[RMDB]
Chemical mapping of a 207-nucleotide RNA with 2A3.
RNA sequence: GGGAACGACUCGAGUAGAGUCGAAAAGCAUCUAACACAAAUACGACGCAUCUGCUAAACACAAGAAUUAUUACAACUAAUGAGUCUAGUUAAUCCAAUUCGAUUAACCGAAAUAAUAAAUUGGCUUACCAAGACCGAAUGGAUUCGAUAUCCGCGACACUGCGUUUUACUUCGGUAAAACGCAGUGAAAAGAAACAACAACAACAAC
Reactivity to 2A3 in 0.01 (KOAc 150mM, MgCl2 10mM, bicine 150mM(pH8.5), 24C), signal-to-noise 1, nucleotides 027 to 156: g050c020a020u020c060u230a250a050c070a020c020a090a050a040u190a060c060g070a000c070g000c000a100u100c040u080g070c050u150a100a150a080c030a000c000a040a030g070a130a060u190u150a110u090u080a080c000a030a050c070u120a000a170u180g060a020g040u020c000u010a040g000u100u070a020a000u000c020c040a060a080u070u110c050g040a020u080u000a060a000c020c010g050a030a160a000u050a000a040u020a020a080a020u020u000g000g020c000u000u000a040c020c000a060a050g040a050c000c010g050a030a060u210g020g020a020u100u000c010g010a020u010a070u140c000c000g080c010g040a040

The data come from the RNA Mapping Database (RMDB), library OK3TST. The reactions ran in a buffer of 150 mM KOAc, 10 mM MgCl2 and 150 mM bicine (pH 8.5), at 24 C.